Record summary:
The record gives the reactivity of an RNA of 177 nucleotides to 2A3 and DMS. For DMS, 1,131 sequencing reads were counted. The reactions ran in a buffer of 150 mM KOAc, 10 mM MgCl2 and 150 mM bicine (pH 8.5), at 24 C. For 2A3, 1,013 sequencing reads were counted. Values cover nucleotides 27 to 126.
[RMDB]
RNA sequence: GGGAACGACUCGAGUAGAGUCGAAAAUCGGUUUAUCGCUAUAAGCCGGAUAGUCGGUCUGAUGAAAGUGUCAUUGUGGCAUUACAAGAAUCAUCUGAACGUUACCCAGCGUAUGGCUUCAGUAAAAGCUGGGGAUACGAUUCGUCGUAUCCCCAGCAAAAGAAACAACAACAACAAC
Reactivity to 2A3 in 0.01 (KOAc 150mM, MgCl2 10mM, bicine 150mM(pH8.5), 24C), signal-to-noise 1, nucleotides 027 to 126: u020c000g020g000u000u030u080a110u050c070g030c090u090a010u000a070a000g030c000c000g000g090a070u080a040g130u090c020g050g000u000c000u040g000a000u000g010a090a040a000g000u000g020u010c030a040u120u300g140u300g120g010c000a010u030u100a080c050a130a070g120a190a080u010c020a020u010c010u000g000a060a000c010g000u020u000a090c000c020c000a000g060c020g070u060a050u120g030g000c000u090u090c110a090g020u210a000a060a150a000
Reactivity to DMS in 0.01 (KOAc 150mM, MgCl2 10mM, bicine 150mM(pH8.5), 24C), signal-to-noise 1, nucleotides 027 to 126: u010c030g000g010u010u000u000a020u000c300g040c090u000a090u000a070a010g000c000c010g000g000a050u000a040g030u000c030g000g030u000c040u010g000a010u000g000a020a100a070g010u000g000u000c020a260u040u010g000u000g020g000c010a030u000u000a130c220a110a100g000a100a150u000c030a030u000c000u010g010a030a030c000g020u000u000a090c010c000c000a140g000c010g010u010a010u000g000g020c000u000u000c120a090g010u000a030a060a040a060